Overview
The record gives the reactivity of an RNA of 207 nucleotides to DMS and 2A3. The reactions ran in a buffer of 150 mM KOAc, 10 mM MgCl2 and 150 mM bicine (pH 8.5), at 24 C.
RNA sequence: GGGAACGACUCGAGUAGAGUCGAAAAGCUCUGUAAUGGGAUGGGAUCCGAAGCCCCAUUGAGGGAUAAUACAGGCUCUCCCAUCCAACUCCUAUUCCAACACGUCCUCGACGUACAGAGUGGUAACUAAGGUAUAGCUCCUUCGGGAGCUAUACAAUCUACUUUAUCUGUUCGCAGAUAAAGUAGAAAAAGAAACAACAACAACAAC
Reactivity to DMS in 0.01 (KOAc 150mM, MgCl2 10mM, bicine 150mM(pH8.5), 24C), signal-to-noise 2, nucleotides 027 to 156: g010c000u000c020u010g010u000a040a080u010g030g000g010a050u000g010g000g040a080u000c020c000g010a140a160g000c000c000c020c000a300u000u000g030a120g010g000g010a120u020a090a160u010a190c100a180g000g000c010u000c050u000c010c010c010a070u010c010c020a060a020c040u000c040c020u010a040u000u010c010c000a020a060c040a080c040g000u000c010c100u000c040g020a070c010g030u000a040c010a040g000a020g020u010g000g010u000a070a110c070u020a070a170g010g000u010a000u000a000g020c000u000c030c000u000u000c300g070g010g010a020g030c010u000a000u010a000c000a040a070
Reactivity to 2A3 in 0.01 (KOAc 150mM, MgCl2 10mM, bicine 150mM(pH8.5), 24C), signal-to-noise 3, nucleotides 027 to 156: g010c000u010c020u030g050u060a130a140u180g140g010g010a010u010g000g010g000a070u160c000c020g020a030a020g000c000c000c030c030a110u110u200g040a300g030g000g010a020u070a140a070u160a240c120a030g000g000c010u000c000u000c000c000c000a000u000c000c000a000a020c000u030c000c010u060a110u120u050c030c020a050a030c020a030c070g020u030c030c140u110c170g010a000c010g010u010a000c000a020g010a040g010u030g010g020u110a130a110c050u060a150a050g060g000u000a000u000a000g000c000u000c000c010u010u040c100g090g000g010a000g010c010u000a000u000a000c000a000a000
Record summary
The 2A3 profile rests on 1,834 reads.